[RMDB]
RNA sequence: GGGAACGACUCGAGUAGAGUCGAAAAAAUUAGAGGCAAUUUGAAAUAAUUUAAAUUAGAUCAACCCUACUGCACUUACCGAACUAGAUAACGGUGUAGUAGGGGUAAAUUCUCCGCAUUCGGUGCGCAACCACCUGAGGUUUCGACCUCAGGUGAACCGUAAUUUCUUGUUCGCAAGAAAUUACGGAAAAGAAACAACAACAACAAC
Reactivity to 2A3 in 0.01 (KOAc 150mM, MgCl2 10mM, bicine 150mM(pH8.5), 24C), signal-to-noise 1, nucleotides 027 to 156: a010a000u210u230a070g000a060g080g080c010a000a050u020u020u090g010a030a070a040u210a030a130u170u100u230a030a060a100u090u070a090g030a060u050c040a020a010c010c000c000u000a000c000u000g000c000a000c000u000u110a020c030c010g050a070a050c090u000a080g080a140u170a230a030c090g020g010u000g000u000a000g000u000a000g000g000g000g000u010a000a000a000u090u010c050u010c000c000g000c040a000u060u070c080g090g030u090g000c010g000c050a150a100c050c010a000c000c000u010g000a000g040g000u000u110u170c100g100a070c000c000u040c000a000g030g000u000g000a000a000